[RMDB]
RNA sequence: GGGAACGACUCGAGUAGAGUCGAAAAGAAAUUAUUUCAACUGUACACUUAUAGCCUACGUACUGUGACGUAUUAUUCACUUAGCUAUACUAACGUGGAUUACAAAUCGACGUUCAAGUGAAAGAAAGGCUAUACUAUUCUUCGGAAUAGUAUAGCCAAAAGAAACAACAACAACAAC
Reactivity to 2A3 in 0.01 (KOAc 150mM, MgCl2 10mM, bicine 150mM(pH8.5), 24C), signal-to-noise 6, nucleotides 027 to 126: g090a010a070a010u250u230a120u060u150u050c050a080a080c060u100g060u170a030c040a020c040u080u050a040u090a160g050c020c020u040a020c020g030u030a040c030u050g020u040g070a010c020g010u010a070u160u020a060u000u010c000a000c000u020u010a010g030c030u050a020u120a220c010u040a040a000c020g010u030g080g040a020u030u070a100c040a000a180a010u010c010g080a010c000g000u000u050c040a080a050g000u020g060a110a040a000g110a050a060a010
Reactivity to DMS in 0.01 (KOAc 150mM, MgCl2 10mM, bicine 150mM(pH8.5), 24C), signal-to-noise 3, nucleotides 027 to 126: g000a110a120a080u020u020a090u000u030u020c040a090a140c110u020g030u010a130c030a040c040u000u000a070u000a100g000c040c060u010a030c100g000u000a050c050u000g010u020g000a090c090g000u000a060u020u000a080u010u000c000a000c010u010u000a030g010c040u010a300u040a150c030u000a030a000c050g050u010g010g030a040u030u010a080c260a040a070a070u000c000g010a000c000g000u050u010c120a110a010g040u000g000a080a060a070g020a140a070a090
Background
This 177-nucleotide RNA was probed chemically with 2A3 and DMS. The RNA was probed in 150 mM KOAc, 10 mM MgCl2 and 150 mM bicine (pH 8.5) at 24 C. 2A3 adducts were read by reverse transcription with SuperScript II with manganese.